[RMDB]
RNA sequence: GGGAACGACUCGAGUAGAGUCGAAAAGAUAUGGAUGCAUCACGAUAAGAAGCAUUCGGAAACGAAUGGCUUCUUUUGACGUGAUGUCCUAAGUCAAAAGUAGUCGCUACUUCGGUAGCGACUACAAGUCUGUGAUAUUGUUCGCAAUAUCACAGACAAAAGAAACAACAACAACAAC
Reactivity to DMS in 0.01 (KOAc 150mM, MgCl2 10mM, bicine 150mM(pH8.5), 24C), signal-to-noise 5, nucleotides 027 to 126: g010a050u000a300u010g000g000a060u010g030c050a000u000c000a000c000g000a120u000a010a010g000a020a010g000c000a030u000u010c000g020g000a090a090a140c010g000a010a010u010g010g000c000u000u000c000u010u010u010u010g010a200c080g010u000g000a010u010g010u000c010c000u010a060a120g000u010c040a050a080a130a150g020u000a010g000u010c000g010c000u000a010c000u000u010c190g040g010u000a000g000c000g010a010c000u000a000c000a030a050
Reactivity to 2A3 in 0.01 (KOAc 150mM, MgCl2 10mM, bicine 150mM(pH8.5), 24C), signal-to-noise 3, nucleotides 027 to 126: g030a010u100a030u180g050g000a030u210g130c030a010u010c010a000c010g040a060u040a210a000g010a000a000g010c010a010u010u010c000g020g020a080a070a020c010g010a010a020u070g230g010c010u000u000c000u020u010u000u020g060a020c010g000u000g000a000u010g000u000c010c000u060a150a040g040u020c040a030a070a050a080g000u000a010g000u010c020g000c010u000a010c020u050u110c260g040g000u000a000g000c000g000a000c000u000a000c000a000a010